[RMDB]
RNA sequence: GGGAACGACUCGAGUAGAGUCGAAAAUUAAUUGUUUUUUGACGUACCAGGUUCUCCUUUUAUACUGUCCGAAUUGUCUUAACUCCAUAGCAGUACUAAUAGUGUCAAUUCUUUCGAUACUAGAAAAGAUAACAUUUCUUUUCGAAGAAAUGUUAUCAAAAGAAACAACAACAACAAC
Reactivity to 2A3 in 0.01 (KOAc 150mM, MgCl2 10mM, bicine 150mM(pH8.5), 24C), signal-to-noise 2, nucleotides 027 to 126: u060u050a060a090u100u090g040u080u060u020u040u040u100g010a020c030g010u020a060c040c030a030g030g000u010u040c030u060c000c000u060u190u060u050a070u030a070c030u090g030u060c030c000g060a090a070u090u020g020u010c000u040u080a080a070c020u000c020c010a020u080a050g030c030a020g030u030a030c020u080a020a140u020a030g020u000g000u000c010a050a120u130u010c060u050u150u050c080g010a010u000a040c010u000a020g080a070a130a010a000
Reactivity to DMS in 0.01 (KOAc 150mM, MgCl2 10mM, bicine 150mM(pH8.5), 24C), signal-to-noise 3, nucleotides 027 to 126: u020u020a110a140u020u000g000u000u000u000u000u010u000g020a090c050g010u000a080c050c040a100g030g020u000u010c040u000c020c030u000u010u010u010a060u010a100c090u000g010u000c050c030g000a060a060u010u010g020u010c070u010u010a050a110c070u010c020c030a070u010a090g000c040a030g020u000a070c170u010a070a080u000a010g010u000g010u000c010a040a090u010u000c160u010u010u000c120g010a050u000a030c010u010a030g000a080a060a090a130
An RNA of 177 nucleotides, treated with 2A3 and DMS and read out base by base. It was measured as part of the RMDB library OK2TST. For 2A3, 1,937 sequencing reads were counted. For DMS the reverse transcriptase was MarathonRT. The reactions ran in a buffer of 150 mM KOAc, 10 mM MgCl2 and 150 mM bicine (pH 8.5), at 24 C.